[RMDB]
RNA sequence: GGGAACGACUCGAGUAGAGUCGAAAACGCUAUAGAUUCGUCUAUAGCGACUCCUACCCGCCGGCCGGUGCGGGCGGUAGGUGACGCAAACCACCGUGCGAAAUGUACUGGUUUUCGAACCAGUAAAUGCGAAAAUGUAAUUCGUUACAUUUUCGCAAAAAGAAACAACAACAACAAC
Reactivity to DMS in 0.01 (KOAc 150mM, MgCl2 10mM, bicine 150mM(pH8.5), 24C), signal-to-noise 3, nucleotides 027 to 126: c020g020c010u000a000u000a010g010a030u010u010c170g030u000c000u000a000u000a010g010c000g010a140c060u000c000c000u000a070c080c020c060g020c020c010g010g020c030c130g020g020u010g020c020g010g020g010c030g000g010u000a020g020g010u010g020a140c080g020c100a030a080a090c100c040a070c030c020g000u000g000c050g010a100a160a110u000g010u000a010c000u000g000g010u000u000u000u020c140g030a020a000c000c000a000g000u000a000a040a100
Reactivity to 2A3 in 0.01 (KOAc 150mM, MgCl2 10mM, bicine 150mM(pH8.5), 24C), signal-to-noise 3, nucleotides 027 to 126: c010g000c000u000a010u010a020g010a000u030u030c160g020u000c100u000a000u000a000g000c010g000a000c000u000c010c010u020a040c000c010c060g010c010c010g090g020c040c030g130g080u210g050c110g010g060g000c010g010g000u030a060g000g050u040g040a050c060g000c090a060a070a040c040c010a020c020c010g080u070g040c020g070a140a020a040u190g010u030a000c000u010g000g010u020u000u040u050c190g040a000a000c000c000a000g010u010a020a040a030
Structure probing data (DMS and 2A3) for a 177-nucleotide construct. The 2A3 profile rests on 4,106 reads. For DMS the reverse transcriptase was MarathonRT. 2A3 adducts were read by reverse transcription with SuperScript II with manganese. The data come from the RNA Mapping Database (RMDB), library M2PK50.